[RMDB]
RNA sequence: GGGAACGACUCGAGUAGAGUCGAAAAAUGAUCCGUGCCGCGGUCAGCUCGCCCAUGCGCCGGCGCAAGGCGUAGCGCUCGGUAUGGUGGAUCAGUCGCUCGAGAUCGUCGCGGGUGAUGUCGACGAAAAAUAAAUCGUAUUCGUACGAUUUAUUUUAAAAGAAACAACAACAACAAC
Reactivity to DMS in 0.01 (KOAc 150mM, MgCl2 10mM, bicine 150mM(pH8.5), 24C), signal-to-noise 9, nucleotides 027 to 126: a100u000g000a020u000c000c010g020u000g000c010c010g020c200g010g010u010c060a210g010c010u000c030g010c010c010c060a080u000g010c030g030c150c200g010g010c030g020c030a080a140g000g010c010g020u010a030g020c010g010c010u000c010g010g010u000a020u000g020g020u010g010g000a020u000c010a050g000u000c070g000c030u000c010g000a090g000a130u000c020g010u000c030g010c060g010g000g020u000g010a090u010g010u000c020g000a050c060g000a010
Reactivity to 2A3 in 0.01 (KOAc 150mM, MgCl2 10mM, bicine 150mM(pH8.5), 24C), signal-to-noise 9, nucleotides 027 to 126: a010u030g000a010u000c000c010g010u020g000c000c010g020c060g010g050u180c060a040g000c010u010c010g000c000c020c020a050u080g000c020g020c050c180g300g030c020g000c020a020a020g020g000c020g050u080a000g000c010g000c010u020c020g000g000u040a040u090g220g060u110g020g000a010u010c010a010g110u030c020g000c030u010c010g050a070g020a200u040c020g020u020c020g020c040g060g040g040u140g050a090u110g080u130c020g020a050c020g040a050